[RMDB]
RNA sequence: GGGAACGACUCGAGUAGAGUCGAAAAGAUAUGGAAUCACGAAUCUGCGAUAAGCUGGUAUCGGAAACGAUACACAGCUUUUGACGCAGACGUGAUUCCUAAGUCAAAAGAGUCCUUCGGGACUCAACCUACAUCGAAUCUUCGGAUUCGAUGUAGGAAAAGAAACAACAACAACAAC
Reactivity to 2A3 in 0.01 (KOAc 150mM, MgCl2 10mM, bicine 150mM(pH8.5), 24C), signal-to-noise 2, nucleotides 027 to 126: g010a010u030a040u130g010g000a010a000u010c000a000c010g070a130a300u060c000u030g010c110g160a090u040a300a000g000c010u010g000g000u010a000u020c000g010g010a030a060a010c050g000a000u010a000c300a000c020a300g000c000u020u000u000u020g030a040c070g020c010a000g020a010c000g000u000g000a000u000u010c000c000u020a000a000g000u000c010a010a030a010a240g000a000g000u000c010c000u070u150c300g070g000g000a000c010u000c010a000a010
Reactivity to DMS in 0.01 (KOAc 150mM, MgCl2 10mM, bicine 150mM(pH8.5), 24C), signal-to-noise 2, nucleotides 027 to 126: g020a010u000a300u010g010g000a010a020u010c000a000c000g020a210a160u000c000u000g010c000g030a130u010a030a010g020c000u000g000g000u000a000u000c000g020g000a080a050a190c010g010a010u000a000c000a140c000a010g000c000u000u000u000u030g010a170c150g000c000a020g000a050c000g020u000g000a010u000u000c000c000u000a000a040g010u000c030a150a080a100a130g010a010g000u000c000c010u010u030c230g030g020g000a020c000u000c000a000a100